[RMDB]
RNA sequence: GGGAACGACUCGAGUAGAGUCGAAAAACGAGGGCGGAGUCUAUCCCUCCGGAAAGACCCAGGUGUACCCGAUCGAAUCCGGUCUUUGUGAGGUAGUCGCGGAUGCCGAGGUGGAGGGCUCCCCGCAAGGGCCAUGAUAGUUCGCUAUCAUGGCCCUAAAAGAAACAACAACAACAAC
Reactivity to DMS in 0.01 (KOAc 150mM, MgCl2 10mM, bicine 150mM(pH8.5), 24C), signal-to-noise 1, nucleotides 027 to 126: a140c080g090a170g050g000g020c060g030g010a110g000u010c050u020a170u070c020c040c010u010c020c010g040g020a020a080a080g010a070c050c020c070a150g000g060u020g020u000a140c000c010c010g010a010u000c070g020a210a080u000c020c000g020g000u020c040u000u000u010g020u000g030a050g010g000u020a300g010u000c030g000c120g030g040a110u000g000c060c020g010a260g000g000u000g020g030a020g020g010g000c140u000c030c000c010c000g030c080a080
This 177-nucleotide RNA was probed chemically with DMS. The DMS profile rests on 595 reads.